An RNA of 177 nucleotides, treated with DMS and 2A3 and read out base by base. The reactions ran in a buffer of 150 mM KOAc, 10 mM MgCl2 and 150 mM bicine (pH 8.5), at 24 C. The DMS profile rests on 1,218 reads. The data come from the RNA Mapping Database (RMDB), library OK1LIB.
[RMDB]
RNA sequence: GGGAACGACUCGAGUAGAGUCGAAAAGGCUGGCGUGUACGAGUGGAGGCUGGCCUCCACUCACGCGUACAACGCGCGUACGAAUCGAGGCCGGCCUCAGGUGGCCUCGACACGUUUAUUUUUAGACAUUGUGUUAGCGGUUCGCCGCUAACACAAUAAAAGAAACAACAACAACAAC
Reactivity to DMS in 0.01 (KOAc 150mM, MgCl2 10mM, bicine 150mM(pH8.5), 24C), signal-to-noise 2, nucleotides 027 to 126: g040g070c140u030g000g040c020g020u000g000u000a080c090g030a060g040u000g030g010a000g000g050c080u020g000g050c050c000u040c000c010a000c000u000c020a130c030g000c060g000u000a030c250a220a150c220g030c020g000c000g050u050a150c130g000a120a170u080c300g000a080g010g000c000c020g040g000c000c000u030c080a010g030g040u000g050g000c100c030u000c000g000a000c080a050c040g000u000u000u000a030u010u040u000u140u050a040g000a300c170
Reactivity to 2A3 in 0.01 (KOAc 150mM, MgCl2 10mM, bicine 150mM(pH8.5), 24C), signal-to-noise 2, nucleotides 027 to 126: g110g010c140u120g000g000c020g050u010g040u080a150c080g010a010g020u040g050g000a000g000g000c040u070g150g210c020c000u010c000c000a000c000u000c000a000c050g010c010g000u050a150c050a140a050c090g000c000g020c000g020u020a110c070g060a040a010u040c000g010a000g000g000c000c000g110g000c000c000u030c010a070g000g040u020g040g010c000c000u000c030g010a010c000a000c010g020u020u110u000a160u040u210u000u010u050a080g010a000c030